[RMDB]
RNA sequence: GGGAACGACUCGAGUAGAGUCGAAAAGCGUAUGCAAAAAUGUGAUCUUGCUUGUAAAUACAAUUUUGAGAGGUUAAUAAAUUACAAGUAGAGCUAUUUUUGUCCCUCUCUGCAAUAGACAGCCAAACAUAGUGGGCAUAUUCGUAUGCCCACUAUGAAAAGAAACAACAACAACAAC
Reactivity to 2A3 in 0.01 (KOAc 150mM, MgCl2 10mM, bicine 150mM(pH8.5), 24C), signal-to-noise 5, nucleotides 027 to 126: g040c050g060u160a080u220g010c030a040a020a000a020a030u120g070u030g220a100u080c040u030u080g000c000u000u000g000u010a000a030a010u170a120c120a100a200u050u020u140u200g130a130g010a030g060g030u080u100a020a050u080a140a190a080u070u020a010c000a010a000g000u010a100g010a020g040c030u040a020u000u040u000u020u020g020u000c010c000c000u000c000u000c010u020g020c010a040a090u040a060g140a060c010a030g030c010c020a030a090a080
Reactivity to DMS in 0.01 (KOAc 150mM, MgCl2 10mM, bicine 150mM(pH8.5), 24C), signal-to-noise 3, nucleotides 027 to 126: g000c080g020u030a050u040g010c030a000a020a020a030a020u000g000u010g000a040u000c010u030u020g020c000u000u010g030u000a010a010a040u030a040c150a080a100u010u000u020u020g010a050g020a050g000g030u020u000a150a070u010a040a090a040u000u000a000c030a040a040g010u000a010g010a060g020c040u000a000u000u000u000u010u000g010u010c030c010c020u000c080u000c020u020g000c060a060a040u020a070g010a060c080a090g020c070c060a070a040a140
Conditions: 150 mM KOAc, 10 mM MgCl2 and 150 mM bicine (pH 8.5), 24 C. An RNA of 177 nucleotides, treated with 2A3 and DMS and read out base by base. For 2A3 the reverse transcriptase was SuperScript II with manganese. The data come from the RNA Mapping Database (RMDB), library OK1LIB. Values are in units of 0.01, from 0 to 300, in steps of 10.